Chemical mapping of a 207-nucleotide RNA with 2A3. Conditions: 150 mM KOAc, 10 mM MgCl2 and 150 mM bicine (pH 8.5), 24 C. For 2A3 the reverse transcriptase was SuperScript II with manganese. The 2A3 profile rests on 725 reads. The data come from the RNA Mapping Database (RMDB), library M2RFPK.

RNA sequence: GGGAACGACUCGAGUAGAGUCGAAAAUAGCGAAGUAGGAUUUUAUGCGUCAAGUGUUCACAGGCUGGGGAGUCGCCGUGAAACGUAAAGCAGAAAGCGUGCUGCUUACGAUAUAAUUUCCGCACCCAUAAGAAGUCUCUGUUCGCAGAGACUUCAACCCCCAUAUCACCUUCGGGUGAUAUGGGGGAAAAGAAACAACAACAACAAC
Reactivity to 2A3 in 0.01 (KOAc 150mM, MgCl2 10mM, bicine 150mM(pH8.5), 24C), signal-to-noise 1, nucleotides 027 to 156: u180a000g050c030g070a160a010g070u080a050g010g060a020u110u060u020u050a040u170g040c020g010u000c110a100a100g020u040g110u190u000c020a010c050a100g000g030c050u110g050g010g020g040a030g010u040c020g000c010c000g000u000g010a010a020a010c020g010u000a040a030a010g000c010a010g080a050a160a020g200c130g040u070g060c020u010g000c000u020u030a040c000g000a000u030a000u010a150a040u000u000u000c000c000g000c000a060c020c010c020a020u130a080a070g030a020a000g000u000c000u020c000u000g030u040u000c090g000c040a010g010a000g000a020c000u000u000c000a000a000